Overview: Conditions: 150 mM KOAc, 10 mM MgCl2 and 150 mM bicine (pH 8.5), 24 C. Chemical mapping of a 177-nucleotide RNA with 2A3 and DMS. 2A3 adducts were read by reverse transcription with SuperScript II with manganese.
[RMDB]
RNA sequence: GGGAACGACUCGAGUAGAGUCGAAAAUGAUCAGGCAACUGAAACUGCUGUGCUGUUUUAGAACUCAAACAAGAUCAACUUCAAUUGAUUGUGGAAGUAAAUUUAAUGAGGAAGUGAACUCAAGAGCGACAUCCGUAGAGUUCGCUCUACGGAUGUCAAAAGAAACAACAACAACAAC
Reactivity to 2A3 in 0.01 (KOAc 150mM, MgCl2 10mM, bicine 150mM(pH8.5), 24C), signal-to-noise 1, nucleotides 027 to 126: u060g000a000u000c000a000g080g000c020a110a010c030u010g030a060a050a000c080u030g000c030u200g050u110g150c020u020g020u000u040u000u020a030g010a070a020c030u000c120a100a020a050c090a060a110g040a040u010c000a010a000c030u100u000c030a060a210u100u050g120a130u050u140g120u080g110g000a030a020g010u110a060a010a160u140u160u080a150a090u050g050a040g030g050a120a220g090u110g100a040a020c020u000c030a040a030g010a020g120c060
Reactivity to DMS in 0.01 (KOAc 150mM, MgCl2 10mM, bicine 150mM(pH8.5), 24C), signal-to-noise 2, nucleotides 027 to 126: u010g000a040u000c030a220g050g010c150a020a070c010u010g020a080a060a140c050u010g000c000u010g040u000g010c010u000g070u000u000u000u000a090g000a100a160c040u010c020a030a080a120c220a070a050g000a020u020c010a060a090c000u000u000c040a040a180u020u020g000a100u010u000g020u050g000g020a020a120g000u000a070a080a030u020u000u000a020a190u020g000a040g000g020a060a040g020u000g000a040a180c040u020c020a080a200g010a080g030c150
The DMS profile rests on 870 reads.
The data come from the RNA Mapping Database (RMDB), library OK2TRN.